[RMDB]
RNA sequence: GGGAACGACUCGAGUAGAGUCGAAAACGACGGGGACGUCGCCACCGGGCGCAGCGCCAGCGUGGUCACUCUGGCCACUGCCGCCGGCUACAAGAUCCUCGGCUCGGGCGAGUACCAGGAUCGCCUCGCGCCCUACCAUAUUCGUAUGGUAGGGCGCAAAAGAAACAACAACAACAAC
Reactivity to DMS in 0.01 (KOAc 150mM, MgCl2 10mM, bicine 150mM(pH8.5), 24C), signal-to-noise 1, nucleotides 027 to 126: c040g010a100c030g040g050g020g000a180c000g000u000c110g020c050c090a150c050c070g070g010g000c090g000c020a040g070c300g000c000c010a010g030c050g020u000g010g010u000c160a060c070u010c000u000g000g010c000c010a180c050u010g000c040c060g020c000c070g010g000c080u000a040c090a070a090g080a120u000c000c000u070c250g000g000c040u000c080g000g000g010c000g000a060g000u000a180c010c010a120g010g010a120u000c040g010c020c100u000c240
Reactivity to 2A3 in 0.01 (KOAc 150mM, MgCl2 10mM, bicine 150mM(pH8.5), 24C), signal-to-noise 1, nucleotides 027 to 126: c020g050a010c020g020g030g000g020a030c030g020u000c000g020c010c000a050c040c020g000g070g040c040g050c010a010g050c030g000c020c000a000g000c030g050u030g130g090u160c090a010c050u070c030u010g000g000c040c080a140c080u040g050c050c060g010c000c000g000g000c010u030a040c020a070a050g030a100u010c000c010u000c040g000g000c050u060c040g170g000g000c130g020a010g030u000a200c030c040a000g010g020a050u030c020g020c030c030u060c020